This 207-nucleotide RNA was probed chemically with 2A3. 2A3 adducts were read by reverse transcription with SuperScript II with manganese. For 2A3, 1,030 sequencing reads were counted. Values cover nucleotides 27 to 156. It was measured as part of the RMDB library RNAMAK.
RNA sequence: GGGAACGACUCGAGUAGAGUCGAAAAGCGUACUACUAAAUGAUUAAGCGUUGAAAUACGACUCCCCACCAUGUCCCAAAUAGGACAUGAGGUCGUAUGGAGCUUAGCCAUUUAGUAUCGCAAAACUAAUAAAUGGCCUUCGGGCCAUUUAUUAGAACUCUAAUUGUCCCUUCGGGGACAAUUAGAGAAAAGAAACAACAACAACAAC
Reactivity to 2A3 in 0.01 (KOAc 150mM, MgCl2 10mM, bicine 150mM(pH8.5), 24C), signal-to-noise 1, nucleotides 027 to 156: g000c000g010u050a040c020u000a000c000u000a010a000a000u010g000a010u000u000a020a000g000c020g180u160u020g010a010a020a010u010a000c000g010a000c020u140c040c010c000c010a010c020c000a000u000g000u010c000c000c000a170a300a150u270a120g030g000a000c000a000u000g000a010g000g000u000c010g010u000a000u000g000g010a000g020c000u000u000a000g000c000c000a000u000u000u000a000g000u000a000u200c020g020c000a040a060a000a060c000u000a000a000u000a000a000a000u000g000g030c000c020u090u060c270g130g030g000c000c000a000u000u000u000a000u000u010a000g000a000a000